This 207-nucleotide RNA was probed chemically with 2A3.
Reactivities are rounded to 0.1 and cut off at 0 and 3.
For 2A3, 1,224 sequencing reads were counted.

[RMDB]
RNA sequence: GGGAACGACUCGAGUAGAGUCGAAAAAGCGUAGCGGUACGCCGCUACGCAAGGCGCAUUUGAACUGUAUUGUACGCCUUGCAUAAAGCAAAAGUACUAAAAAAACGUGCCGUUACGACGGCUCGAAAAAACAUCCAUUGGUUCGCCAAUGGAUGAAUCGAAGGGGGAAGUUCGCUUCCCCCUUCGAAAAAGAAACAACAACAACAAC
Reactivity to 2A3 in 0.01 (KOAc 150mM, MgCl2 10mM, bicine 150mM(pH8.5), 24C), signal-to-noise 2, nucleotides 027 to 156: a000g010c010g010u000a000g000c000g000g000u040a040c210g020c020c010g000c000u000a000c000g000c000a000a010g010g000c000g000c030a050u060u100u260g140a180a130c130u100g050u240a080u130u080g040u040a020c000g000c000c000u000u020g000c030a070u150a190a130a090g020c030a040a010a050a010g070u060a080c120u250a000a030a080a000a030a040a110c010g000u030g020c010c000g000u010u050a020c170g000a010c020g090g010c000u000c030g090a130a020a000a010a000a000c000a000u000c010c000a000u000u010g010g000u020u050c160g010c120c000a000a000u000g000g000a000u000g010a000a050